[RMDB]
RNA sequence: GGGAACGACUCGAGUAGAGUCGAAAACAGGAGGACGAGGCGACCCUGGAAGGUCGUCAUGCCGGUGAUGCCUCGGGUGACGAAGUUGAACGUGGGGUUCGUAUCCUCGUCGCCGGAGCCACGUCGAUCAUACUCCAGCUCGUUCAAGCUGUAGGUGGUUGUGGGCAGAGUUCGCUCUGCCCACAACAAAAGAAACAACAACAACAAC
Reactivity to 2A3 in 0.01 (KOAc 150mM, MgCl2 10mM, bicine 150mM(pH8.5), 24C), signal-to-noise 1, nucleotides 027 to 156: c060a000g090g050a030g040g000a010c000g000a010g000g010c000g000a010c020c050c010u040g010g120a200a100g110g050u000c000g000u000c050a030u200g220c000c000g000g030u150g100a060u230g030c000c010u030c000g000g000g010u010g000a010c010g030a000a050g040u150u120g130a170a010c210g060u300g050g000g000g110u070u180c020g000u000a140u140c000c010u000c000g000u020c000g000c010c000g030g000a030g130c070c030a150c180g030u030c000g010a040u060c040a010u030a140c010u050c000c010a000g000c060u010c030g060u010u000c030a070a020g130c040u050g090u140a050g000g200u060g100